[RMDB]
The record gives the reactivity of an RNA of 207 nucleotides to 2A3 and DMS. It was measured as part of the RMDB library OK3TST. The 2A3 profile rests on 1,190 reads. For DMS the reverse transcriptase was MarathonRT. The DMS profile rests on 3,845 reads. Conditions: 150 mM KOAc, 10 mM MgCl2 and 150 mM bicine (pH 8.5), 24 C.

RNA sequence: GGGAACGACUCGAGUAGAGUCGAAAAUCGUGAUGAUAAGAGCUCCUGCAGAAAUGUCAGCAUAGCAAAAGCCUUUUGAAGGUUUAGUAAGAAGCAGAGAAAGUGCCUGAAGCUAUCUGGGGAAUGCCUUAGCCCUUGCUAACGCAGCAGAGCUGGAAAAUUAAAUGCGAUUCGUCGCAUUUAAUUUAAAAGAAACAACAACAACAAC
Reactivity to 2A3 in 0.01 (KOAc 150mM, MgCl2 10mM, bicine 150mM(pH8.5), 24C), signal-to-noise 3, nucleotides 027 to 156: u090c030g030u060g070a180u060g000a010u060a260a090g030a000g020c030u050c060c030u070g000c030a040g110a170a130a020u180g070u080c020a020g010c050a020u030a030g020c020a090a110a030a040g010c000c000u060u080u100u110g140a130a100g060g010u070u070u050a020g000u080a100a100g050a100a000g080c010a000g030a000g030a150a030a000g080u080g070c000c000u040g050a090a020g000c000u020a000u020c010u030g000g010g030g030a110a060u110g020c020c030u020u030a030g010c010c010c000u010u030g000c000u050a060a010c020g020c050a000g000c040a020g010a000g000c010u050g030g000a050
Reactivity to DMS in 0.01 (KOAc 150mM, MgCl2 10mM, bicine 150mM(pH8.5), 24C), signal-to-noise 3, nucleotides 027 to 156: u010c030g040u010g030a170u010g020a220u010a080a120g000a140g050c010u010c020c030u000g030c070a090g020a100a150a090u000g030u000c010a060g050c040a090u000a060g030c020a060a270a170a090g000c010c000u000u000u000u000g000a300a220g000g020u000u000u000a120g010u010a110a160g000a070a080g010c030a060g010a300g020a060a070a080g020u010g020c040c020u030g020a110a140g000c020u000a060u000c020u000g020g020g000g010a060a080u000g000c000c030u010u000a110g060c000c060c040u000u010g010c010u000a060a050c160g000c080a100g030c060a050g000a100g000c020u000g010g000a110